[RMDB]
RNA sequence: GGGAACGACUCGAGUAGAGUCGAAAAGAGAUGGUUAGUGAUAGUGUGGUGUCAUUAAUGGCGAAUCCAGGUUUAGACGGAUUAUGUGCCAUACCAUCAAAAUUGGUUUUGUCAAGGUACAUAUCAACUGAAACAAGGGGUUCGCCCCUUGUUUCAGAAAAGAAACAACAACAACAAC
Reactivity to DMS in 0.01 (KOAc 150mM, MgCl2 10mM, bicine 150mM(pH8.5), 24C), signal-to-noise 1, nucleotides 027 to 126: g000a180g000a050u010g010g000u000u000a040g030u000g000a000u000a080g010u000g010u010g010g020u000g050u010c030a010u000u030a070a060u010g000g000c020g000a090a030u000c010c000a150g010g020u030u000u010a120g030a220c210g000g000a040u000u000a020u000g010u000g010c020c020a070u000a040c000c010a030u010c040a050a040a030a130u000u000g000g010u000u000u000u000g000u000c080a120a120g000g030u000a010c040a060u000a050u000c140a050a130
This 177-nucleotide RNA was probed chemically with DMS. The RNA was probed in 150 mM KOAc, 10 mM MgCl2 and 150 mM bicine (pH 8.5) at 24 C.